This 177-nucleotide RNA was probed chemically with 2A3 and DMS. Reactivities are given for positions 27 through 126. 2A3 is a SHAPE reagent: it acylates the 2'-hydroxyl of flexible nucleotides of all four kinds. For 2A3 the reverse transcriptase was SuperScript II with manganese. The reactions ran in a buffer of 150 mM KOAc, 10 mM MgCl2 and 150 mM bicine (pH 8.5), at 24 C. The data come from the RNA Mapping Database (RMDB), libraries RFM100 and RFMREP.

[RMDB]
RNA sequence: GGGAACGACUCGAGUAGAGUCGAAAAGUGUCAUAGUGCAUUGCUGCAUUUAAAAGGUCCGUAGUCAGUGUUGACAGGGAUGCUAGAAGACACUUUCUUCAUGGAGUGUAUUGGCAUUCUAGGUUAGUAGGUGCUUUUAUUUCGAUAAAAGCACCUAAAAAGAAACAACAACAACAAC
Reactivity to 2A3 in 0.01 (KOAc 150mM, MgCl2 10mM, bicine 150mM(pH8.5), 24C), signal-to-noise 4, nucleotides 027 to 126: g060u050g050u030c020a060u110a080g060u040g050c020a030u040u150g050c020u070g010c020a030u050u150u300a070a070a000a000g060g030u040c020c000g020u030a040g040u040c010a010g050u040g060u250u070g050a020c030a020g000g010g000a000u000g080c000u020a060g080a150a000g040a090c000a000c000u050u050u050c020u120u110c060a130u190g020g010a000g030u000g000u040a100u120u080g060g000c000a000u000u000c000u030a020g080g070u070u060a040g060
Reactivity to DMS in 0.01 (KOAc 150mM, MgCl2 10mM, bicine 150mM(pH8.5), 24C), signal-to-noise 6, nucleotides 027 to 126: g010u000g020u000c030a100u010a050g010u000g010c030a050u010u030g030c180u020g000c030a040u000u000u020a050a080a120a080g000g000u000c010c020g010u010a100g010u010c020a070g010u020g010u030u000g000a020c020a210g000g010g000a020u000g000c000u000a060g020a120a110g010a020c000a010c000u000u000u010c030u010u020c170a110u020g000g010a000g020u010g000u000a110u020u010g010g000c010a010u000u000c000u000a080g010g010u020u020a080g010